[RMDB]
RNA sequence: GGGAACGACUCGAGUAGAGUCGAAAAGACAGCACAGUAUCUUAGAGGGAAAGGAAAUGUAGGAUGCCAGUGUGGGGACAAAUUUCUGAUUGCCAGUGAUUGUUGUGAGCAUAACAAUAAUUUCAUGAACAUUAAAGCCUCUAUUGAGGGCAGCUGAGGCGAGUCGGGUGUUCGCACCCGACUCGCCAAAAGAAACAACAACAACAAC
Reactivity to 2A3 in 0.01 (KOAc 150mM, MgCl2 10mM, bicine 150mM(pH8.5), 24C), signal-to-noise 2, nucleotides 027 to 156: g050a010c020a010g010c010a020c000a010g080u100a050u040c040u070u060a040g000a040g040g030g050a060a100a010g030g050a050a060a030u110g000u030a030g000g060a020u050g010c030c030a030g010u020g020u050g070g010g000g000a000c000a050a090a000u040u070u000c050u040g070a090u060u080g000c050c020a020g010u020g060a060u040u020g020u010u030g010u040g030a060g040c070a060u030a140a010c020a030a030u080a040a060u080u050u080c100a110u060g040a010a010c000a010u040u100a060a100a000g030c020c000u020c020u070a140u070u140g070a060g010g000g000c020a000g010c010u050g010a020